[RMDB]
RNA sequence: GGGAACGACUCGAGUAGAGUCGAAAAAUAAGUGGGGCUAGCCUUUAGCACACCAGAACUAAAUUGAAAUGAAUAUGAACCAAGUCAGUGGCCCAUGGAAAGGGAUGAGCUCUGCACUCAUGGAGCAAGUGUUAGCAAGAUUCGUCUUGCUAACACUAAAAGAAACAACAACAACAAC
Reactivity to DMS in 0.01 (KOAc 150mM, MgCl2 10mM, bicine 150mM(pH8.5), 24C), signal-to-noise 2, nucleotides 027 to 126: a080u010a050a090g030u000g000g020g030g030c040u010a070g010c130c060u010u010u020a020g000c030a120c080a050c030c050a070g010a140a130c110u000a030a040a060u000u010g000a060a070a130u010g010a090a110u020a080u000g000a060a100c070c030a020a090g000u000c060a050g010u010g000g000c020c030c000a040u000g000g000a060a060a100g010g000g020a040u000g000a070g000c020u000c040u000g000c070a070c040u000c090a050u010g000g000a070g050c120a080
Reactivity to 2A3 in 0.01 (KOAc 150mM, MgCl2 10mM, bicine 150mM(pH8.5), 24C), signal-to-noise 2, nucleotides 027 to 126: a010u190a080a030g060u070g020g010g100g000c020u010a020g100c030c060u100u100u060a010g040c000a040c000a040c040c020a040g080a090a020c060u100a100a090a230u140u110g130a100a050a100u090g060a070a010u230a020u200g010a030a020c030c010a030a030g030u000c020a000g000u050g060g000c000c000c010a040u020g010g070a080a100a060g060g010g020a020u090g010a010g000c010u000c000u020g020c020a070c020u010c010a050u150g020g010a080g040c050a030